[RMDB]
Record summary
Structure probing data (DMS and 2A3) for a 207-nucleotide construct. 2A3 adducts were read by reverse transcription with SuperScript II with manganese. DMS adducts were read by reverse transcription with MarathonRT. It was measured as part of the RMDB library OK3TST.
RNA sequence: GGGAACGACUCGAGUAGAGUCGAAAAUCGAGUACUCUCGUACACUCGAGUUCGUACGUGAUCGAUCGAGUGAUCGUACUCACUCUCGAACUCGAUCGAGUACACUCUCACGAGAACGUUCUCGAUCUCUCGAACGUACGUACUCGUUCACUCGAACCAUACGCCAUAUCUUCGGAUAUGGCGUAUGAAAAGAAACAACAACAACAAC
Reactivity to DMS in 0.01 (KOAc 150mM, MgCl2 10mM, bicine 150mM(pH8.5), 24C), signal-to-noise 2, nucleotides 027 to 156: u010c060g020a060g030u000a030c030u000c050u020c020g000u000a180c060a160c060u030c010g010a060g050u000u000c030g010u000a060c040g020u000g000a110u000c020g020a070u000c000g010a130g020u010g000a040u000c080g000u000a120c190u000c020a050c000u000c070u000c000g010a080a100c010u010c050g020a020u000c020g000a070g000u010a050c060a120c060u000c040u000c080a160c150g000a050g000a060a160c040g020u000u000c020u000c000g010a040u000c030u000c050u010c020g010a050a060c070g030u010a190c060g030u000a020c000u000c000g020u000u010c120a100c010u000c060g000a090a210c150
Reactivity to 2A3 in 0.01 (KOAc 150mM, MgCl2 10mM, bicine 150mM(pH8.5), 24C), signal-to-noise 6, nucleotides 027 to 156: u070c010g010a010g010u040a060c030u010c020u040c120g040u070a030c050a040c100u030c010g010a000g010u010u010c010g000u010a040c050g010u010g040a050u210c010g010a020u010c020g050a050g140u240g050a030u030c040g010u060a070c040u010c010a010c000u040c000u010c030g020a050a040c010u000c060g000a010u010c010g010a000g000u040a040c020a040c060u050c010u020c030a040c080g000a000g030a140a060c110g010u070u020c010u000c010g010a070u020c050u020c020u020c050g020a030a010c020g010u060a010c030g020u030a030c030u010c020g020u040u040c060a060c030u060c070g030a040a040c020